[RMDB]
RNA sequence: GGGAACGACUCGAGUAGAGUCGAAAACUCCCAUUCGUGGGAGGUCCGGGGGUCGACGACUACGAGGCUGAGACAUGCUCUGAAGCCUCCACGGAGCAACAGCUCAGCUCCCCACCGUAGGUCGACGGAGGCACCCUGCUACUAGUUUCGACUAGAAUAUAUUAUCUUCCUUCGGGAAGAUAAUAUAAAAAGAAACAACAACAACAAC
Reactivity to 2A3 in 0.01 (KOAc 150mM, MgCl2 10mM, bicine 150mM(pH8.5), 24C), signal-to-noise 2, nucleotides 027 to 156: c010u010c030c010c010a040u060u080c240g050u070g030g000g000a020g000g020u030c070c030g050g000g010g010g000u010c010g010a020c010g020a240c020u010a010c000g010a030g010g050c000u010g010a000g010a040c040a060u070g000c000u000c000u020g050a140a040g010c000c010u010c010c010a000c020g000g010a010g000c000a020a120c010a150g100c010u010c010a010g010c000u120c050c010c020c010a070c060c010g020u010a020g010g050u000c010g000a010c010g010g000a010g000g000c000a060c020c010c020u070g070c020u060a100c000u030a050g000u060u120u140c140g060a020c020u070a010g100a200a010
Reactivity to DMS in 0.01 (KOAc 150mM, MgCl2 10mM, bicine 150mM(pH8.5), 24C), signal-to-noise 3, nucleotides 027 to 156: c010u000c000c000c000a080u000u000c210g000u000g020g030g010a050g020g010u000c050c030g020g140g020g050g010u010c020g020a120c000g010a120c020u010a050c030g000a300g030g010c010u030g020a100g010a060c030a300u000g000c000u030c000u000g010a060a130g020c020c000u000c010c010a300c000g020g000a040g030c000a060a100c070a130g040c010u000c010a040g010c040u010c240c120c000c080a300c170c020g000u000a040g010g010u000c010g040a090c030g030g010a080g100g020c010a120c020c030c000u000g010c040u000a110c040u000a050g010u000u000u000c050g020a120c060u000a060g000a180a300

An RNA of 207 nucleotides, treated with 2A3 and DMS and read out base by base. The reactions ran in a buffer of 150 mM KOAc, 10 mM MgCl2 and 150 mM bicine (pH 8.5), at 24 C. For DMS, 4,416 sequencing reads were counted. Values cover nucleotides 27 to 156. For DMS the reverse transcriptase was MarathonRT.